[RMDB]
RNA sequence: GGGAACGACUCGAGUAGAGUCGAAAAUUGAUCACCACCCCGCAUGACGCGCCCGGCUUUCAUCGACUCCUGGGCGACGGCGCGCACUUGGGAGUGAACAUCAGCUACGCCACCCAGGAUCAGCCUGUAGUAGAUGCGGAUUCGUCCGCAUCUACUAAAAAGAAACAACAACAACAAC
Reactivity to DMS in 0.01 (KOAc 150mM, MgCl2 10mM, bicine 150mM(pH8.5), 24C), signal-to-noise 2, nucleotides 027 to 126: u010u000g000a090u020c040a030c130c030a190c000c060c000c110g000c150a060u000g000a090c040g000c040g020c050c000c060g050g000c070u000u000u060c060a060u030c060g040a080c070u000c070c020u000g000g020g030c060g010a100c100g120g000c060g020c180g000c060a080c060u000u000g000g030g010a090g000u000g020a100a110c150a090u000c130a060g050c070u040a050c090g020c030c010a070c050c010c000a090g000g010a070u020c040a050g010c080c020u000g050
Reactivity to 2A3 in 0.01 (KOAc 150mM, MgCl2 10mM, bicine 150mM(pH8.5), 24C), signal-to-noise 3, nucleotides 027 to 126: u070u040g010a020u030c030a020c090c000a090c030c000c000c010g040c070a140u150g060a110c020g000c000g030c030c030c000g040g030c070u080u190u120c080a180u110c040g050a040c030u010c040c010u050g000g010g000c010g010a020c020g000g000c000g000c000g030c000a040c080u110u120g080g000g010a060g040u030g030a030a040c000a090u110c010a010g040c040u120a080c090g000c000c000a020c000c020c010a010g000g000a010u010c010a000g040c000c010u070g010